[RMDB]
RNA sequence: GGGAACGACUCGAGUAGAGUCGAAAAUUGUUGAAAGAUUGCAAGUAUGACGGAGUUGUUUUGAAAGUGUCUGCAACACCGCCAGGUAGAGAGUGUGAAUUCAAAACACAGCAUGAGGUGUCAAUUGCACUUCUGUUCGGUUCGCCGAACAGAAGUGAAAAGAAACAACAACAACAAC
Reactivity to DMS in 0.01 (KOAc 150mM, MgCl2 10mM, bicine 150mM(pH8.5), 24C), signal-to-noise 1, nucleotides 027 to 126: u000u020g020u000u020g000a090a130a100g000a120u010u010g010c060a080a080g020u010a000u000g010a000c050g020g030a120g000u020u000g010u000u000u030u010g000a020a040a080g000u010g020u030c020u010g010c030a050a180c100a010c000c010g070c060c200a050g020g020u000a070g020a280g000a060g020u020g010u000g060a070a190u000u020c180a030a070a000a060c060a010c070a060g000c120a050u000g010a070g040g020u000g000u010c040a040a080u000u000g010
Source: RMDB library OK2TST, as collected in RNAgym.
This 177-nucleotide RNA was probed chemically with DMS.
The reactions ran in a buffer of 150 mM KOAc, 10 mM MgCl2 and 150 mM bicine (pH 8.5), at 24 C.
For DMS the reverse transcriptase was MarathonRT.